Annotation: The record gives the reactivity of an RNA of 177 nucleotides to DMS and 2A3.
RNA sequence: GGGAACGACUCGAGUAGAGUCGAAAAUGUGCUGGCCUAUUGUUGGUUGAGGAGGCGCCGUACCGCGGUGGAGCACAAGUCUCGUCUGUGCCUGAAGAGCUUGCAGUACGGCUAGUGCCGCUGUCAACCUAUUACGUGGAUUCGUCCACGUAAUAGGAAAAGAAACAACAACAACAAC
Reactivity to DMS in 0.01 (KOAc 150mM, MgCl2 10mM, bicine 150mM(pH8.5), 24C), signal-to-noise 9, nucleotides 027 to 126: u010g010u000g010c040u000g010g010c020c020u000a090u000u000g010u000u000g010g000u000u000g010a190g010g010a110g010g010c070g010c000c020g010u000a030c030c060g020c030g000g010u010g000g010a210g010c010a030c020a030a090g000u010c100u010c140g000u010c070u000g010u000g010c020c030u000g010a170a130g010a240g000c030u000u010g040c010a040g000u000a020c020g010g000c020u000a020g010u010g010c010c020g010c040u000g010u000c070a090a110
Reactivity to 2A3 in 0.01 (KOAc 150mM, MgCl2 10mM, bicine 150mM(pH8.5), 24C), signal-to-noise 6, nucleotides 027 to 126: u170g020u040g030c050u050g020g050c010c020u070a080u060u150g060u050u110g070g030u020u050g020a040g030g060a030g020g000c010g000c010c000g020u030a030c010c010g000c020g050g020u070g050g060a100g020c010a010c020a050a050g060u020c070u030c150g190u010c040u040g020u030g040c000c010u130g080a170a070g050a040g120c070u200u300g010c070a020g000u040a010c020g020g000c020u020a030g030u050g070c010c020g020c020u030g100u070c020a020a000
The data come from the RNA Mapping Database (RMDB), library OK2TST. Conditions: 150 mM KOAc, 10 mM MgCl2 and 150 mM bicine (pH 8.5), 24 C.